About this RNA:
The data come from the RNA Mapping Database (RMDB), library OK2TRN. An RNA of 177 nucleotides, treated with DMS and 2A3 and read out base by base. The RNA was probed in 150 mM KOAc, 10 mM MgCl2 and 150 mM bicine (pH 8.5) at 24 C. High DMS reactivity at an A or C suggests that its Watson-Crick edge is free.
RNA sequence: GGGAACGACUCGAGUAGAGUCGAAAACUUCGAUUAACCCAUAGCACAGGAUGGGCAACACCUGCAGCGAGCCUAAGGUGGGAGCUCCCCACAUCUAUUCCAAGGUUGUGAGCCCCUCUGAAAAGGACUAGUUUGAUCUAUUCGUAGAUCAAACUAGAAAAGAAACAACAACAACAAC
Reactivity to DMS in 0.01 (KOAc 150mM, MgCl2 10mM, bicine 150mM(pH8.5), 24C), signal-to-noise 7, nucleotides 027 to 126: c100u010u000c110g020a120u010u000a130a170c020c010c010a110u010a100g020c110a120c100a110g010g000a050u000g000g010g010c040a210a070c040a060c030c010u010g010c140a110g020c080g010a070g020c080c100u000a100a120g020g020u000g010g010g000a130g010c170u000c040c050c030c020a020c040a040u020c050u010a120u010u000c090c080a150a060g000g010u000u000g010u000g010a150g010c010c000c000c060u000c010u010g000a060a060a090a090g000g010a230
Reactivity to 2A3 in 0.01 (KOAc 150mM, MgCl2 10mM, bicine 150mM(pH8.5), 24C), signal-to-noise 5, nucleotides 027 to 126: c010u150u100c050g120a130u140u160a120a150c000c010c030a050u110a060g110c060a030c050a140g040g050a060u030g030g000g000c000a020a010c020a020c020c000u070g030c060a070g030c050g080a000g000c010c040u070a090a050g050g000u010g000g010g010a100g030c030u070c010c000c020c000a010c000a040u040c040u070a100u120u010c030c010a050a020g050g000u130u100g090u070g010a030g000c000c000c000c010u000c010u030g020a070a040a020a020g060g000a020